[RMDB]
RNA sequence: GGGAACGACUCGAGUAGAGUCGAAAAAAAAAGAUAUGGACAUUGAACUACUUCUGAAGGUAGCGAAGAACGAUACUCGGAAACGAGUAUCGGGAGCUACCCAGAAGCAAUGUCCUAAGUCAAAAAAGUAUACACUUACGUUCGCGUAAGUGUAUACAAAAGAAACAACAACAACAAC
Reactivity to 2A3 in 0.01 (KOAc 150mM, MgCl2 10mM, bicine 150mM(pH8.5), 24C), signal-to-noise 1, nucleotides 027 to 126: a000a000a000a000a100g030a030u070a030u140g010g000a000c000a000u000u030g010a040a010c110u300a080c010u300u000c000u010g110a300a080g080g010u000a010g020c080g200a300a020g000a040a010c000g000a000u000a010c000u000c000g000g000a020a000a010c000g010a010g000u000a000u000c000g000g030g000a020g000c010u010a010c020c000c000a000g000a000a020g020c000a000a000u000g000u020c000c000u000a000a010g010u040c040a000a000a220a300a000a000
Reactivity to DMS in 0.01 (KOAc 150mM, MgCl2 10mM, bicine 150mM(pH8.5), 24C), signal-to-noise 2, nucleotides 027 to 126: a060a080a080a110a080g010a020u020a090u010g000g010a020c000a000u010u010g000a080a020c030u020a300c010u010u000c000u000g010a180a100g010g000u010a010g030c010g030a130a130g000a060a170c010g000a000u000a000c000u030c010g010g000a010a020a040c000g010a020g030u000a000u000c000g000g000g000a070g020c000u000a000c000c010c000a000g000a010a000g000c000a010a000u000g020u000c010c000u000a000a040g000u010c000a000a010a140a070a090a110
An RNA of 177 nucleotides, treated with 2A3 and DMS and read out base by base. 2A3 adducts were read by reverse transcription with SuperScript II with manganese. The RNA was probed in 150 mM KOAc, 10 mM MgCl2 and 150 mM bicine (pH 8.5) at 24 C. For DMS, 2,335 sequencing reads were counted.